[RMDB]
Structure probing data (DMS and 2A3) for a 207-nucleotide construct. Values cover nucleotides 27 to 156.

RNA sequence: GGGAACGACUCGAGUAGAGUCGAAAACAGAGGCCGCAUGUCACUUCUGGAUGGGUCAGGCAUCACUACCAGCCCUGACUUGAUGGCGGCAGAUCAGCAUGGCACUGUCAACUAGCCCUUGACAUAAAUCUGUUGUAACUCAGCCCCAGACAUGAUAAUCGAUAUACCCAUUCGUGGGUAUAUCGAUAAAAGAAACAACAACAACAAC
Reactivity to DMS in 0.01 (KOAc 150mM, MgCl2 10mM, bicine 150mM(pH8.5), 24C), signal-to-noise 2, nucleotides 027 to 156: c020a070g010a080g050g000c020c030g000c030a080u030g010u000c040a100c040u000u000c040u010g010g030a160u000g010g000g050u000c040a080g020g000c030a110u010c110a180c080u010a070c040c010a090g000c180c030c010u000g010a110c040u010u020g030a170u000g000g000c060g010g030c000a020g000a090u010c070a140g020c060a060u010g020g020c050a130c130u010g000u000c010a060a070c030u000a140g000c020c070c190u010u010g010a050c010a090u010a040a070a120u000c040u000g040u000u000g000u000a130a080c070u010c020a080g000c000c000c020c030a120g010a020c030a040u010g000a110u000a080
Reactivity to 2A3 in 0.01 (KOAc 150mM, MgCl2 10mM, bicine 150mM(pH8.5), 24C), signal-to-noise 3, nucleotides 027 to 156: c020a010g040a020g040g020c030c020g050c110a060u050g020u030c010a020c050u050u020c040u050g080g020a090u090g070g000g020u030c010a010g040g000c020a090u150c080a110c140u180a120c050c050a040g050c030c000c010u010g000a020c010u030u090g060a060u090g020g000c030g000g000c000a000g010a050u030c000a010g050c050a060u070g040g000c070a020c130u030g020u040c010a010a030c040u030a020g020c030c010c000u000u010g030a030c020a020u190a050a090a030u020c030u020g000u040u000g050u060a070a050c030u030c100a020g010c010c030c020c000a020g010a050c010a030u090g060a100u300a140